Structure probing data (2A3 and DMS) for a 177-nucleotide construct.
Conditions: 150 mM KOAc, 10 mM MgCl2 and 150 mM bicine (pH 8.5), 24 C.
Reactivities are given for positions 27 through 126.
For 2A3, 173,339 sequencing reads were counted.
DMS adducts were read by reverse transcription with MarathonRT.
RNA sequence: GGGAACGACUCGAGUAGAGUCGAAAAUCUGUUGAGAUAUGCGAUCGUAUAGUCAAAGAGGGACUACGGUCACAGCAACAGAAGUCAGACUGAGGCAAGACACUCGGACUAUACAGAAUCGUGACCACAUCUCGUGUGUAUUCGUACAUACGAGAUGAAAAGAAACAACAACAACAAC
Reactivity to 2A3 in 0.01 (KOAc 150mM, MgCl2 10mM, bicine 150mM(pH8.5), 24C), signal-to-noise 9, nucleotides 027 to 126: u010c010u020g060u050u100g130a130g020a170u160a060u280g010c030g000a000u000c010g000u030a040u050a090g010u000c040a090a150a090g130a070g060g090g010a020c020u050a050c080g030g000u000c010a010c010a030g040c010a010a040c010a050g090a110a020g100u060c050a020g020a160c030u080g030a020g040g030c070a100a050g040a040c030a020c040u000c000g030g010a020c010u010a010u000a030c030a010g050a060a040u010c010g010u010g030a020c000c010a020
Reactivity to DMS in 0.01 (KOAc 150mM, MgCl2 10mM, bicine 150mM(pH8.5), 24C), signal-to-noise 9, nucleotides 027 to 126: u000c020u000g020u010u000g010a090g010a130u000a090u000g010c020g010a020u000c020g010u000a040u000a030g010u000c010a050a100a130g020a090g010g010g010a080c040u000a060c120g020g010u000c010a050c030a050g010c020a070a050c070a070g010a080a100g000u000c130a090g010a150c050u010g000a050g010g010c050a100a070g000a110c070a070c050u000c010g010g000a030c000u000a030u000a010c020a150g000a060a030u000c010g020u000g000a200c030c030a250